[RMDB]
RNA sequence: GGGAACGACUCGAGUAGAGUCGAAAACGCUGGGCCUGGAGGAUUCUAUAGGGAGCUGAAGCGCGCACGGCGACGAUCUAUAGUAAUCCCUUGAAGGGCCUGUGCUGAAGCGCGCACGGCAACCGAAAGGUGCGAUAACGCCGUUUCGACGGCGUAAUAAUCUAUAACUCUUCGGAGUUAUAGAUUAAAAAGAAACAACAACAACAAC
Reactivity to 2A3 in 0.01 (KOAc 150mM, MgCl2 10mM, bicine 150mM(pH8.5), 24C), signal-to-noise 2, nucleotides 027 to 156: c050g020c010u030g000g000g020c000c000u020g020g010a010g010g000a010u030u010c010u000a000u000a000g020g000g000a010g020c000u010g010a070a020g000c000g000c010g000c000a010c010g000g030c010g040a050c000g000a050u000c010u010a000u000a040g120u230a030a040u010c030c000c000u130u010g010a000a000g000g000g000c000c030u010g010u060g000c030u090g050a080a030g000c000g010c000g000c000a000c030g170g000c040a060a170c020c000g000a090a030a030g040g020u030g020c050g030a060u100a220a020c000g000c040c010g000u000u100u160c200g040a050c000g000g000c000g000u000a000a000
Reactivity to DMS in 0.01 (KOAc 150mM, MgCl2 10mM, bicine 150mM(pH8.5), 24C), signal-to-noise 2, nucleotides 027 to 156: c070g030c030u010g000g020g020c020c000u010g020g020a030g050g000a040u000u010c020u020a030u000a030g040g000g000a040g020c000u000g000a050a030g040c010g000c010g030c030a300c010g020g010c000g020a070c200g020a020u000c010u000a030u000a020g030u010a020a040u010c010c000c260u010u030g000a300a300g000g010g020c020c010u000g020u000g010c040u020g000a060a050g020c000g030c010g030c000a080c040g020g000c020a150a160c020c020g020a100a140a300g000g020u000g000c000g000a120u010a100a100c000g050c000c000g000u000u000u000c270g010a110c000g040g010c000g000u000a000a160